An RNA of 177 nucleotides, treated with DMS and 2A3 and read out base by base.
RNA sequence: GGGAACGACUCGAGUAGAGUCGAAAAUACACCGGCCCUGGUUCGGGCUCCCUGCUGGCGGCCGCGGCCAGCUGGGAUGCGCUGGCAGCCGAGCUGGGUACCACGGCCGAAACAUGUGGGUCGAUCCGUUUUAUGAUGGGUUCGCCCAUCAUAAAACAAAAGAAACAACAACAACAAC
Reactivity to DMS in 0.01 (KOAc 150mM, MgCl2 10mM, bicine 150mM(pH8.5), 24C), signal-to-noise 1, nucleotides 027 to 126: u060a080c150a160c080c020g020g000c040c010c010u000g040g040u000u030c060g030g000g010c060u000c040c030c020u000g000c030u000g020g000c030g000g010c000c000g000c120g020g010c010c000a000g000c010u000g010g000g000a000u000g010c000g000c240u020g010g020c000a030g000c000c040g010a040g000c040u010g000g000g000u010a070c060c000a080c010g000g000c020c020g000a040a040a010c070a000u060g010u030g000g000g010u030c040g000a050u040c000c030
Reactivity to 2A3 in 0.01 (KOAc 150mM, MgCl2 10mM, bicine 150mM(pH8.5), 24C), signal-to-noise 3, nucleotides 027 to 126: u150a000c050a060c050c010g040g000c000c000c010u060g030g000u040u050c050g020g020g010c000u030c000c000c000u020g030c020u030g030g020c030g020g000c000c020g020c010g050g070c010c000a000g000c000u030g100g010g020a020u090g000c070g030c070u170g280g000c010a010g040c020c010g020a010g000c010u020g000g010g030u080a150c000c000a030c010g000g000c000c000g010a030a070a000c030a060u230g020u100g030g020g010u030c030g010a030u060c010c040
The reactions ran in a buffer of 150 mM KOAc, 10 mM MgCl2 and 150 mM bicine (pH 8.5), at 24 C. For 2A3, 2,840 sequencing reads were counted. For DMS the reverse transcriptase was MarathonRT. Values cover nucleotides 27 to 126.